Structure probing data (DMS) for a 177-nucleotide construct. For DMS, 802 sequencing reads were counted. For DMS the reverse transcriptase was MarathonRT. Conditions: 150 mM KOAc, 10 mM MgCl2 and 150 mM bicine (pH 8.5), 24 C.

RNA sequence: GGGAACGACUCGAGUAGAGUCGAAAAGCGAAUUUACGUUGAGUACAACAAGAGGGAUCCCAACCUGGUCAGAGUGCAGCACCGUAACGCCGGACUGGCGAUCAUCCCGGCCGGGUCCAUCGCGGUGUCGGUAGGGUGCAUUCGUGCACCCUACCGAAAAAGAAACAACAACAACAAC
Reactivity to DMS in 0.01 (KOAc 150mM, MgCl2 10mM, bicine 150mM(pH8.5), 24C), signal-to-noise 1, nucleotides 027 to 126: g030c030g010a180a020u010u010u000a040c120g000u010u000g000a190g040u010a040c070a090a040c050a080a140g010a090g000g030g010a130u000c000c030c030a030a170c050c080u010g010g020u000c030a060g000a110g050u020g030c040a090g010c040a030c020c020g010u000a000a060c180g000c090c200g000g010a060c060u010g030g010c050g010a080u010c160a050u000c020c000c010g000g000c030c020g000g040g050u000c100c050a100u010c040g000c040g000g000u000g020